[RMDB]
An RNA of 177 nucleotides, treated with 2A3 and DMS and read out base by base. The DMS profile rests on 13,433 reads.
RNA sequence: GGGAACGACUCGAGUAGAGUCGAAAAGCAUUGGUUACUCAGCCUGGCCCUCCCUGCCUUGCGGGGUGACCUGCCUGGUCCUGGCCUCUCUGUGAGUUGGGCCCUGCUGGGUGGUCCCUAGUGUGCCCAGAGAGUCUUAGUUCGCUAAGACUCUCUGAAAAGAAACAACAACAACAAC
Reactivity to 2A3 in 0.01 (KOAc 150mM, MgCl2 10mM, bicine 150mM(pH8.5), 24C), signal-to-noise 2, nucleotides 027 to 126: g000c010a030u030u150g020g000u020u050a000c000u010c010a010g000c010c020u000g010g000c030c000c000u020c030c000c020u020g060c010c030u020u060g020c020g010g020g000g000u040g030a040c000c020u020g020c020c080u050g000g030u060c030c050u020g060g010c030c010u060c000u040c050u120g150u070g120a070g050u110u070g020g000g000c010c000c010u030g000c000u020g000g000g020u020g020g000u130c000c020c000u020a050g040u010g030u050g040c000c020
Reactivity to DMS in 0.01 (KOAc 150mM, MgCl2 10mM, bicine 150mM(pH8.5), 24C), signal-to-noise 4, nucleotides 027 to 126: g010c030a040u010u010g010g000u000u010a020c020u000c010a040g010c000c050u000g000g010c000c020c030u010c120c030c040u010g010c070c050u000u000g010c010g020g010g000g010u000g000a060c010c010u000g000c040c060u000g000g000u000c060c070u010g010g010c260c020u000c020u000c080u010g010u000g010a040g020u000u000g010g020g010c020c010c050u000g000c020u000g000g000g020u000g000g000u000c070c070c100u000a040g020u000g000u000g000c040c030